Structure probing data (DMS and 2A3) for a 177-nucleotide construct.
The DMS profile rests on 829 reads.
The 2A3 profile rests on 879 reads.
DMS adducts were read by reverse transcription with MarathonRT.

RNA sequence: GGGAACGACUCGAGUAGAGUCGAAAAGGGCGAACUAUACAGUGUCUUGCCUACCUCUGAUCUCAUGGUGGAGAAACUCUAUUUAUCUUCACAUAGAGGGAUUAUCAAAGAUGACGAGGCCAAUUGGUCGAGACUAGGUGUUCGCACCUAGUCUCGAAAAAGAAACAACAACAACAAC
Reactivity to DMS in 0.01 (KOAc 150mM, MgCl2 10mM, bicine 150mM(pH8.5), 24C), signal-to-noise 1, nucleotides 027 to 126: g060g000g050c010g000a020a010c020u000a170u010a180c130a220g040u000g020u000c070u000u000g020c020c040u000a000c010c000u000c060u000g030a170u000c020u000c020a100u000g010g030u000g000g010a050g030a060a150a100c300u000c150u000a070u010u000u000a090u010c070u000u000c060a040c090a060u000a080g000a030g000g000g000a060u010u000a080u010c030a030a090a090g020a030u000g000a070c110g000a030g020g020c010c110a130a150u010u000g010g010
Reactivity to 2A3 in 0.01 (KOAc 150mM, MgCl2 10mM, bicine 150mM(pH8.5), 24C), signal-to-noise 1, nucleotides 027 to 126: g060g010g020c020g000a030a030c010u010a070u110a300c140a080g050u020g000u060c000u040u100g020c000c020u000a000c040c000u000c040u050g050a020u000c000u000c030a050u130g070g000u010g030g030a050g000a060a030a030c050u010c010u040a130u060u150u030a180u030c030u030u100c040a060c000a050u060a010g130a110g010g040g000a020u060u040a050u130c040a060a040a080g050a050u040g030a010c040g030a000g000g040c060c080a120a100u160u180g110g000